The record gives the reactivity of an RNA of 177 nucleotides to DMS and 2A3.

[RMDB]
RNA sequence: GGGAACGACUCGAGUAGAGUCGAAAAGAUAUGGAACAGCAAGGAACUACAUUUGCGGUCGGAAACGACCGACAAAUGCCGUAUGCUGUUCCUAAGUCAAACGAGAUUGGCUUCGGCCAAUCUCGAACAUAUGUAUUCCCUUCGGGGAAUACAUAUGAAAAGAAACAACAACAACAAC
Reactivity to DMS in 0.01 (KOAc 150mM, MgCl2 10mM, bicine 150mM(pH8.5), 24C), signal-to-noise 6, nucleotides 027 to 126: g000a040u000a300u010g000g000a020a000c000a010g020c010a030a170g000g010a140a050c070u010a240c010a010u000u000u010g000c020g000g000u000c000g000g010a090a090a170c010g010a000c000c000g000a050c000a000a000a000u000g000c030c070g010u010a090u010g000c000u000g010u000u000c000c000u000a020a060g010u000c020a090a110a260c030g000a010g000a020u000u010g010g020c010u000u010c210g010g000c010c000a000a000u000c000u000c000g000a050a110
Reactivity to 2A3 in 0.01 (KOAc 150mM, MgCl2 10mM, bicine 150mM(pH8.5), 24C), signal-to-noise 5, nucleotides 027 to 126: g020a000u060a040u140g000g010a000a010c000a010g000c020a040a110g060g050a140a090c110u250a060c300a030u010u000u010g000c000g000g010u010c010g010g010a040a080a060c010g020a010c000c000g100a020c000a000a000a000u020g040c000c020g070u070a100u110g000c000u000g000u000u000c000c000u000a020a010g020u010c030a040a050a110c030g000a000g010a010u000u010g000g000c000u090u140c300g060g000c000c000a000a000u010c000u000c010g000a000a000
Background:
DMS adducts were read by reverse transcription with MarathonRT. It was measured as part of the RMDB library TTRDEL. The 2A3 profile rests on 14,073 reads.